[RMDB]
RNA sequence: GGGAACGACUCGAGUAGAGUCGAAAACUACUAAUAGUUUGUUCAGACUAGUUCUGUAUAAGCAAAACAGUUUUCGCAAAAACAGCCUGAGUUUCUUACUACCCAUUUAGCACAAAUAUUGCUGAUGCCUGAAAGUAUACUUCGGUAUACUUUCAGGAAAAGAAACAACAACAACAAC
Reactivity to DMS in 0.01 (KOAc 150mM, MgCl2 10mM, bicine 150mM(pH8.5), 24C), signal-to-noise 2, nucleotides 027 to 126: c020u000a170c100u010a050a200u010a100g030u000u000u000g010u000u000c030a020g010a030c020u030a110g030u000u000c010u020g020u010a040u000a010a030g020c000a080a140a180a140c150a010g010u000u000u000u010c050g030c040a050a050a110a130a080c130a070g020c010c000u000g000a020g010u000u010u000c020u000u010a130c220u020a120c070c100c010a090u000u000u000a020g040c010a040c230a050a100a100u010a110u010u000g000c040u030g000a040u000g000
Reactivity to 2A3 in 0.01 (KOAc 150mM, MgCl2 10mM, bicine 150mM(pH8.5), 24C), signal-to-noise 2, nucleotides 027 to 126: c020u040a000c030u050a030a120u110a180g020u030u000u000g030u000u040c000a000g000a000c000u090a090g040u100u010c000u010g030u020a020u010a050a010g030c000a000a060a050a050c000a020g000u000u010u040u030c030g000c020a060a080a070a090a110c020a040g070c000c010u030g020a010g010u010u050u030c020u040u050a050c040u060a080c000c000c030a020u040u070u160a030g020c030a030c030a060a300a170u190a090u150u090g010c000u010g010a010u050g050

Source: RMDB library RFMREP, as collected in RNAgym. Structure probing data (DMS and 2A3) for a 177-nucleotide construct. The DMS profile rests on 1,083 reads. For 2A3 the reverse transcriptase was SuperScript II with manganese.